[RMDB]
RNA sequence: GGGAACGACUCGAGUAGAGUCGAAAAGCACUACAGACUGAUGUGCUGCAACAAAACCAGCAAUUGUUAGCCGACUCAUUUAAUAAUGCAAUCGGCAAUAUUACAUUAGCCUUCAAAGAAGUUAGUGAGGGCCUCUCACAAGUCUCGGGCGCGGUAGUAUACUUCGUUUCUUCGGAAACGAAGUAUAAAAAGAAACAACAACAACAAC
Reactivity to DMS in 0.01 (KOAc 150mM, MgCl2 10mM, bicine 150mM(pH8.5), 24C), signal-to-noise 2, nucleotides 027 to 156: g030c020a020c010u010a110c080a070g010a090c020u000g000a090u000g010u000g000c030u000g000c100a070a200c100a080a060a150a170c080c010a080g030c020a050a150u000u000g030u000u000a090g030c010c000g020a040c010u010c000a030u000u000u000a130a100u000a130a020u000g000c210a040a020u000c000g040g010c010a080a020u000a070u000u000a120c040a050u000u000a050g030c020c000u000u010c050a070a100a110g010a100a120g010u000u020a060g020u010g020a070g000g000g020c030c050u010c030u010c020a070c060a080a160g000u000c030u000c060g010g000g020c050g000c090g020g010u010a090g010
Reactivity to 2A3 in 0.01 (KOAc 150mM, MgCl2 10mM, bicine 150mM(pH8.5), 24C), signal-to-noise 2, nucleotides 027 to 156: g010c000a000c020u130a010c100a100g100a090c030u060g000a040u030g050u020g040c010u050g040c030a030a050c000a030a150a040a040c070c020a010g030c030a060a250u120u070g020u130u140a010g000c000c000g010a000c000u010c050a000u000u070u140a270a170u250a100a000u040g030c080a030a090u030c000g030g020c000a000a000u050a060u090u050a020c020a030u040u070a020g020c000c010u020u140c060a110a070a020g060a140a010g090u090u210a010g030u040g020a030g000g010g030c010c020u040c000u010c000a030c010a070a040g020u030c030u010c060g000g010g000c050g000c010g070g000u000a020g050

The record gives the reactivity of an RNA of 207 nucleotides to DMS and 2A3.
For DMS, 3,360 sequencing reads were counted.
The 2A3 profile rests on 872 reads.
DMS adducts were read by reverse transcription with MarathonRT.